[RMDB]
RNA sequence: GGGAACGACUCGAGUAGAGUCGAAAAGUGAGAGGAGAUGGCAAUUGCUUUUUUAGAAGCUUUGCUCUCCUAUUCUUGGGAUCGGAAGAUCAAUGGAGAGCUGUCAAAAAUACAGCCAUCAACUAUGCAAGAGCAAACUGGACAGAAUGCACAAUGGAUAGAGACAUUUGUUCGCAAAUGUCUCUAUAAAAGAAACAACAACAACAAC
Reactivity to DMS in 0.01 (KOAc 150mM, MgCl2 10mM, bicine 150mM(pH8.5), 24C), signal-to-noise 2, nucleotides 027 to 156: g010u000g000a070g020a130g000g010a160g000a100u000g020g060c010a160a090u000u010g010c010u000u010u010u030u000u010a220g020a070a040g000c020u000u000u000g040c000u000c000u000c000c010u000a070u000u010c060u000u010g030g010g010a060u000c030g030g020a130a190g010a070u010c040a060a230u010g000g000a060g000a060g050c020u010g060u000c040a050a030a120a060a100u010a050c020a140g010c010c010a050u000c010a030a150c070u000a050u000g010c040a070a110g010a090g030c020a050a060a160c100u000g010g010a090c080a060g000a070a080u000g000c030a060c040a030a120u000g000g010
Reactivity to 2A3 in 0.01 (KOAc 150mM, MgCl2 10mM, bicine 150mM(pH8.5), 24C), signal-to-noise 4, nucleotides 027 to 156: g070u060g010a130g000a020g100g020a050g010a050u070g040g000c000a030a070u110u060g010c010u100u080u080u020u040u070a180g070a080a010g000c000u060u050u040g000c000u000c000u000c000c000u020a070u060u070c030u050u110g060g040g010a010u030c040g040g100a060a020g010a060u050c040a060a080u070g020g000a030g000a010g010c030u030g020u120c140a040a070a040a030a000u170a090c030a020g000c000c000a020u020c010a000a020c040u050a020u110g020c040a030a040g020a010g040c010a000a030a090c060u020g000g030a020c020a030g070a060a020u090g010c020a010c020a070a050u130g070g020